Background: Conditions: 150 mM KOAc, 10 mM MgCl2 and 150 mM bicine (pH 8.5), 24 C. The record gives the reactivity of an RNA of 177 nucleotides to DMS and 2A3. For DMS, 1,886 sequencing reads were counted. Values cover nucleotides 27 to 126.
[RMDB]
RNA sequence: GGGAACGACUCGAGUAGAGUCGAAAAGCAGGGCAAGCCUAUUGGUAUGUUCUUCCCUUAUGACAUCGAACUUGUCACAGGAAAGCAAAAUAUUCUCCUGCGCAAGUAUGGCCGUGGUGGUUAUCACACCUAAUACCGUCUUCGGACGGUAUUAGGUAAAAGAAACAACAACAACAAC
Reactivity to DMS in 0.01 (KOAc 150mM, MgCl2 10mM, bicine 150mM(pH8.5), 24C), signal-to-noise 3, nucleotides 027 to 126: g020c200a050g010g010g020c040a040a300g020c020c010u020a080u000u010g030g060u010a100u010g010u000u000c020u000u010c000c010c010u010u000a070u000g000a060c030a040u010c160g010a130a050c080u000u000g010u020c020a050c050a010g000g000a010a010a070g010c200a060a080a070a110u020a110u000u000c160u000c000c000u000g000c100g010c040a000a020g010u000a050u010g000g020c000c040g010u000g000g010u000g010g000u000u000a060u000c110a090c160
Reactivity to 2A3 in 0.01 (KOAc 150mM, MgCl2 10mM, bicine 150mM(pH8.5), 24C), signal-to-noise 2, nucleotides 027 to 126: g050c020a010g010g000g000c020a000a060g020c010c000u130a270u150u280g020g000u040a070u070g010u020u010c010u010u000c020c020c000u010u110a180u080g010a020c020a040u040c070g060a040a070c010u030u060g060u130c030a000c010a050g000g020a090a020a020g060c130a130a060a020a080u170a130u090u050c080u000c040c010u010g010c020g000c000a030a040g000u020a060u060g060g000c040c020g040u030g010g000u030g000g120u060u100a150u150c000a010c010
Source information:
For DMS the reverse transcriptase was MarathonRT.